[RMDB]
RNA sequence: GGGAACGACUCGAGUAGAGUCGAAAACCCCAAGCGGGUACAGCUGGGCCCGAACAGAGUGGGAUGGGUUGAGGACGAAGUGCUGGACUGGCUUCAGCAACGGCUGGAUGGCCGCGAAGAGUCCAACACUUAUGCACCCUUUCGAGGGUGCAUAAGUAAAAGAAACAACAACAACAAC
Reactivity to 2A3 in 0.01 (KOAc 150mM, MgCl2 10mM, bicine 150mM(pH8.5), 24C), signal-to-noise 2, nucleotides 027 to 126: c010c000c000c010a060a000g030c040g020g020g000u050a110c030a060g040c040u060g000g050g000c040c020c020g000a030a060c080a040g050a040g060u120g000g040g050a080u070g020g000g000u080u090g070a050g020g020a020c020g030a090a020g010u030g010c050u020g000g000a000c000u050g040g160c040u030u040c020a010g030c060a170a070c040g040g000c000u040g030g120a110u190g160g000c000c020g030c020g030a010a000g010a000g030u000c000c000a000a000c030
Reactivity to DMS in 0.01 (KOAc 150mM, MgCl2 10mM, bicine 150mM(pH8.5), 24C), signal-to-noise 4, nucleotides 027 to 126: c060c000c000c160a110a080g030c040g010g010g010u010a050c110a070g010c030u000g010g000g010c020c040c030g020a110a090c130a090g010a060g040u010g000g000g000a050u000g000g010g000u020u000g010a110g000g000a130c110g000a100a030g000u010g010c040u000g000g010a040c020u020g010g010c020u000u000c020a120g020c100a120a090c050g000g020c020u010g020g020a110u030g000g000c010c010g030c060g000a050a060g010a110g000u000c000c010a030a090c030

Structure probing data (2A3 and DMS) for a 177-nucleotide construct. 2A3 adducts were read by reverse transcription with SuperScript II with manganese. DMS adducts were read by reverse transcription with MarathonRT.